RNA sequence: GGGAACGACUCGAGUAGAGUCGAAAAGAGCUUAGGGGAAUAUUGUCAUGGUAGAACAUGACAUGUAAUUCCUAAGCAUGGUUGGGAACCUAUCUCAUGUUCUACUAUGGGAUCAUAUUCCAACAUAGAUAGUAUUGAUUUUCGAGUCAGUGCUAUCAAAAGAAACAACAACAACAAC
Reactivity to DMS in 0.01 (KOAc 150mM, MgCl2 10mM, bicine 150mM(pH8.5), 24C), signal-to-noise 9, nucleotides 027 to 126: g000a100g010c030u010u010a060g010g000g000g000a040a020u010a010u010u000g000u000c000a000u000g000g000u000a060g000a060a080c000a000u000g000a010c070a010u000g000u020a120a260u010u000c000c000u000a000a020g010c080a040u020g010g010u000u000g000g000g000a030a040c130c100u020a060u010c120u000c000a000u000g000u000u020c060u010a040c050u020a000u000g000g000g000a060u020c170a040u000a080u000u000c000c000a050a060c080a090u030a100
Reactivity to 2A3 in 0.01 (KOAc 150mM, MgCl2 10mM, bicine 150mM(pH8.5), 24C), signal-to-noise 9, nucleotides 027 to 126: g070a010g020c050u080u070a040g020g030g010g070a030a030u060a040u040u080g080u020c000a000u000g010g000u020a010g010a030a010c000a000u000g000a000c000a000u010g000u020a020a040u020u000c000c000u000a010a000g030c010a030u050g110g000u010u010g000g000g000a010a010c010c010u010a030u020c020u000c000a000u000g010u050u040c040u040a040c000u020a010u010g010g010g030a020u050c010a010u020a020u020u000c000c000a010a000c010a030u060a020